[RMDB]
RNA sequence: GGGAACGACUCGAGUAGAGUCGAAAAGAUAUGGAUCGUUGUGGUAUGGACAUGAAAUCAGGACUCGGAAACGAGUCCGGAUUUCAACAGCCAUACGUAACAUCAACGAUCCUAAGUCAAAGCAGGUUUAAUAGUGUUCGCACUAUUAAACCUGCAACUAUUACGGCGUCUUCGGACGCCGUAAUAGAAAAGAAACAACAACAACAAC
Reactivity to 2A3 in 0.01 (KOAc 150mM, MgCl2 10mM, bicine 150mM(pH8.5), 24C), signal-to-noise 1, nucleotides 027 to 156: g000a010u020a030u140g000g000a000u000c000g010u000u000g010u030g030g000u000a000u000g000g020a070c130a300u270g020a020a010a010u010c060a050g000g000a000c010u010c010g000g000a000a080a060c000g000a020g000u000c000c010g010g000a000u000u000u000c000a020a020c020a020g020c000c000a010u000a000c000g000u020a000a060c000a040u120c000a000a000c010g000a000u010c000c000u010a060a000g030u010c050a140a010a040g000c000a000g000g000u030u000u000a000a000u000a010g010u010g070u110u160c270g030c110a000c010u000a000u000u000a000a000a000c000c000u000g010c000a000a000
Overview: Structure probing data (2A3) for a 207-nucleotide construct. Source: RMDB library RNAMAK, as collected in RNAgym. The 2A3 profile rests on 1,244 reads. The reactions ran in a buffer of 150 mM KOAc, 10 mM MgCl2 and 150 mM bicine (pH 8.5), at 24 C.